[RMDB]
Structure probing data (2A3 and DMS) for a 177-nucleotide construct.
RNA sequence: GGGAACGACUCGAGUAGAGUCGAAAAGGGCUUUUUUGAUGUUUUGGGGUUGCGGUGUUUUCAGACGGCAUGGCUGCGGCGGUGCAAUGUCGAGCUGUGCCUGUUUCAGGGCGGCGGCGGUGUUGCGGAUAUGGAGGUAGUUCGCUACCUCCAUAUCAAAAGAAACAACAACAACAAC
Reactivity to 2A3 in 0.01 (KOAc 150mM, MgCl2 10mM, bicine 150mM(pH8.5), 24C), signal-to-noise 3, nucleotides 027 to 126: g070g000g010c040u140u070u030u000u070u200g220a160u080g080u040u070u090u160g100g020g020g000u060u090g000c030g010g050u050g060u080u070u060u160c010a030g020a020c000g020g010c000a030u000g040g000c000u210g060c010g000g010c000g010g030u180g070c130a080a080u140g010u030c010g010a010g000c010u010g020u020g050c020c000u060g010u010u050u070c010a020g000g000g020c020g000g010c020g010g020c020g000g050u030g000u010u000g010c030g050
Reactivity to DMS in 0.01 (KOAc 150mM, MgCl2 10mM, bicine 150mM(pH8.5), 24C), signal-to-noise 3, nucleotides 027 to 126: g020g000g000c050u000u000u000u000u000u000g000a070u010g000u010u000u000u020g010g000g000g020u000u020g020c130g000g000u020g010u010u020u010u010c080a090g000a070c080g010g000c020a020u010g000g020c000u000g010c050g000g010c020g030g000u030g000c270a090a080u040g010u010c020g010a080g010c000u010g030u000g010c000c000u000g000u000u000u020c070a090g000g000g000c070g000g010c160g030g020c010g010g010u010g000u000u000g010c080g000
For DMS the reverse transcriptase was MarathonRT. The RNA was probed in 150 mM KOAc, 10 mM MgCl2 and 150 mM bicine (pH 8.5) at 24 C. High DMS reactivity at an A or C suggests that its Watson-Crick edge is free.